An RNA of 207 nucleotides, treated with 2A3 and read out base by base.
[RMDB]
RNA sequence: GGGAACGACUCGAGUAGAGUCGAAAAGUUACCCUAAAUGCACGCUGCACGAGGACUACGGGCGGCUGUGGGAGAGCCGCCAGUUCUGCGACGUGGAGUUCGUGCUGGGUGAGGUGGGUGCCUGUCCUCGCACCCUGCUCUGCCUGCUGUGCCUGGGGGCGCGUGUUUCAUUCGUGAAACACGCGCCAAAAGAAACAACAACAACAAC
Reactivity to 2A3 in 0.01 (KOAc 150mM, MgCl2 10mM, bicine 150mM(pH8.5), 24C), signal-to-noise 2, nucleotides 027 to 156: g040u060u150a140c030c020c000u060a100a100a070u170g010c010a010c020g000c020u150g010c020a010c030g010a010g010g030a020c030u120a090c120g100g030g010c010g000g000c050u040g020u040g030g140g010a070g010a000g010c000c000g000c000c000a010g010u000u020c030u100g040c040g250a120c010g050u030g020g050a010g020u150u200c010g000u010g000c010u040g020g000g010u020g020a050g010g060u040g010g000g020u000g030c030c060u100g080u160c010c010u020c030g030c000a010c000c000c000u010g040c000u010c000u040g050c000c040u030g030c010u030g070u120g040c060c040u150g040g030g000
For 2A3, 908 sequencing reads were counted.